Chemical mapping of a 207-nucleotide RNA with DMS and 2A3.
Values are in units of 0.01, from 0 to 300, in steps of 10.
The RNA was probed in 150 mM KOAc, 10 mM MgCl2 and 150 mM bicine (pH 8.5) at 24 C.
RNA sequence: GGGAACGACUCGAGUAGAGUCGAAAAUAUGUAGCUUCACUCUUACCAUCAAUAUCUACAUGUGAAUCUUAAACUCUGACUUUUAAAAUGACCCAGUAUUUAUUGGCUUUCCAAUUCUGGCAAUUAUGGCAAAUGUGGGUUUUGCUACAGGACAUGAUGCUGACUAGUAUUUCGAUACUAGUCAGCAAAAAGAAACAACAACAACAAC
Reactivity to DMS in 0.01 (KOAc 150mM, MgCl2 10mM, bicine 150mM(pH8.5), 24C), signal-to-noise 2, nucleotides 027 to 156: u000a020u000g020u010a040g030c060u000u020c060a020c060u000c100u000u010a120c020c020a080u020c070a130a080u010a050u010c010u000a020c030a050u000g000u010g010a160a040u000c080u000u010a060a070a050c060u000c050u010g000a090c100u010u010u020u000a010a030a140a060u000g000a180c140c030c050a150g050u010a020u000u000u000a030u010u000g010g020c100u000u000u000c030c010a050a090u000u000c050u000g010g000c040a060a090u000u010a030u000g040g030c030a010a020a060u000g050u000g010g030g010u000u000u010u010g010c010u000a040c030a040g000g000a050c040a080u010g010a170
Reactivity to 2A3 in 0.01 (KOAc 150mM, MgCl2 10mM, bicine 150mM(pH8.5), 24C), signal-to-noise 3, nucleotides 027 to 156: u190a030u030g000u000a010g020c030u050u040c030a040c040u080c070u070u110a120c030c060a090u100c020a070a030u060a040u140c010u060a040c040a070u100g010u030g050a030a070u090c050u100u110a120a110a080c030u050c030u140g090a100c020u130u070u030u110a040a140a020a050u060g010a040c000c000c000a000g070u030a080u040u170u010a080u000u060g010g030c040u120u130u140c040c020a050a060u060u010c050u050g010g000c030a030a010u060u040a090u100g030g000c030a040a060a040u110g010u110g000g000g000u050u030u020u040g020c000u020a010c010a030g070g030a020c060a100u000g030a010
For 2A3 the reverse transcriptase was SuperScript II with manganese. The DMS profile rests on 2,964 reads.